Conditions: 150 mM KOAc, 10 mM MgCl2 and 150 mM bicine (pH 8.5), 24 C.
The record gives the reactivity of an RNA of 170 nucleotides to 2A3 and DMS.
For DMS, 120,615 sequencing reads were counted.
The 2A3 profile rests on 90,277 reads.
DMS adducts were read by reverse transcription with MarathonRT.
[RMDB]
RNA sequence: GGGAACGACUCGAGUAGAGUCGAAAAUUGAAGGCAAAACAGCCUGUGGGUGAAACACACCCACAGGGCCCAUUGGGCGCUAGCACUCUGGUAUCACGGUACCUUUGUGCGCCUGUUUUACCGAAGGAAACACAUAUGUUCGCAUAUGUGAAAAGAAACAACAACAACAAC
Reactivity to 2A3 in 0.01 (KOAc 150mM, MgCl2 10mM, bicine 150mM(pH8.5), 24C), signal-to-noise 9, nucleotides 027 to 129: u040u050g020a040a000g000g010c000a000a000a000a000c000a000g000c000c000u000g000u000g000g000g000u020g050a060a090a000c140a010c000a000c050c000c000a000c000a000g000g000g000c000c000c000a030u270u300g000g000g000c010g010c070u120a050g000c010a000c000u000c000u000g000g000u000a000u030c020a050c220g120g000u000a000c000c000u000u000u010g000u000g000c000g000c000c000u000g000u000u000u000u000a010c000c000g000a010a000g040g150a010a030a000
Reactivity to DMS in 0.01 (KOAc 150mM, MgCl2 10mM, bicine 150mM(pH8.5), 24C), signal-to-noise 9, nucleotides 027 to 129: u030u030g010a090a090g000g040c000a000a010a000a010c010a030g000c000c000u000g000u010g010g010g020u020g010a080a150a110c270a180c000a000c040c000c000a020c000a000g030g010g000c000c000c000a020u070u100g030g030g020c010g020c000u060a070g040c000a000c010u000c000u000g000g030u000a000u020c020a160c280g050g000u010a030c000c000u000u000u000g010u000g010c000g010c010c000u000g010u030u000u000u010a050c000c020g000a060a100g020g020a050a050a080